[RMDB]
RNA sequence: GGGAACGACUCGAGUAGAGUCGAAAAAUGACUGCAAUGGUCGCGCCCCCUGCCUGCAGGGCCCCGCGAUGGGCUGCUGCAUCGAUGCCUCUUGCCAGACCGCUGACGAUAGUGAAACCGAAGUUCGGGUCUUACAGAUGUUCGCAUCUGUAAGACCAAAAGAAACAACAACAACAAC
Reactivity to DMS in 0.01 (KOAc 150mM, MgCl2 10mM, bicine 150mM(pH8.5), 24C), signal-to-noise 1, nucleotides 027 to 126: a120u020g000a070c020u000g040c120a110a040u010g020g020u000c010g010c220g000c060c000c010c020c050u000g010c060c060u000g020c020a060g000g000g000c000c000c000c020g020c270g010a120u000g010g030g000c040u000g010c010u000g000c010a050u010c060g000a080u000g010c030c010u000c020u020u010g010c050c050a060g080a100c080c070g020c050u000g010a090c070g000a060u010a090g060u000g020a070a060a130c050c020g000a090a090g010u010u000c060g030

Chemical mapping of a 177-nucleotide RNA with DMS. For DMS, 1,023 sequencing reads were counted. It was measured as part of the RMDB library OK2TST. Reactivities are given for positions 27 through 126. The reactions ran in a buffer of 150 mM KOAc, 10 mM MgCl2 and 150 mM bicine (pH 8.5), at 24 C.